Background:
The record gives the reactivity of an RNA of 207 nucleotides to DMS and 2A3. For 2A3 the reverse transcriptase was SuperScript II with manganese. For DMS the reverse transcriptase was MarathonRT. Reactivities are given for positions 27 through 156. The reactions ran in a buffer of 150 mM KOAc, 10 mM MgCl2 and 150 mM bicine (pH 8.5), at 24 C.
RNA sequence: GGGAACGACUCGAGUAGAGUCGAAAAACAGUGGACAAGAGGACCCUCAGGUGGCUUUGAGUAUUUGCCUCAAGCCCAUCAUCCCUGAAGGCAGAUGUGCUUGAUCUUAACAGAGCCCAGGAAGUCUCCCCUCAGAUACAAUUUUGGAAAAAGGACAACCUAGUGGAUAGUUCGCUAUCCACUAGGUAAAAGAAACAACAACAACAAC
Reactivity to DMS in 0.01 (KOAc 150mM, MgCl2 10mM, bicine 150mM(pH8.5), 24C), signal-to-noise 1, nucleotides 027 to 156: a020c060a120g020u010g010g000a080c070a070a120g010a020g010g000a100c090c020c060u000c020a050g090g050u000g060g020c010u000u040u010g010a060g020u000a060u010u000u020g000c160c010u000c040a010a060g090c040c010c000a060u010c030a290u000c030c000c040u000g020a180a060g010g040c090a120g000a070u020g000u000g020c000u010u000g000a130u000c020u000u000a120a130c070a070g000a120g000c000c000c040a070g000g010a070a090g000u000c030u000c000c020c010c040u000c030a110g000a150u010a020c080a060a170u010u000u000u000g000g000a010a030a110a070a060g000g010a070c000a100
Reactivity to 2A3 in 0.01 (KOAc 150mM, MgCl2 10mM, bicine 150mM(pH8.5), 24C), signal-to-noise 3, nucleotides 027 to 156: a000c020a020g020u040g020g010a020c040a080a080g010a060g140g000a050c020c080c010u030c070a100g000g090u120g110g000c020u160u050u050g020a080g020u130a200u180u130u180g060c000c020u020c000a000a010g000c030c060c000a020u020c020a030u020c020c020c000u050g160a140a120g020g000c070a030g020a070u020g030u010g050c010u010u070g010a070u080c060u090u060a050a050c020a010g030a000g030c000c020c020a020g050g030a050a020g020u020c030u020c050c010c000c010u060c030a030g010a030u070a110c070a100a120u110u070u060u050g040g030a050a040a050a060a050g090g020a010c010a010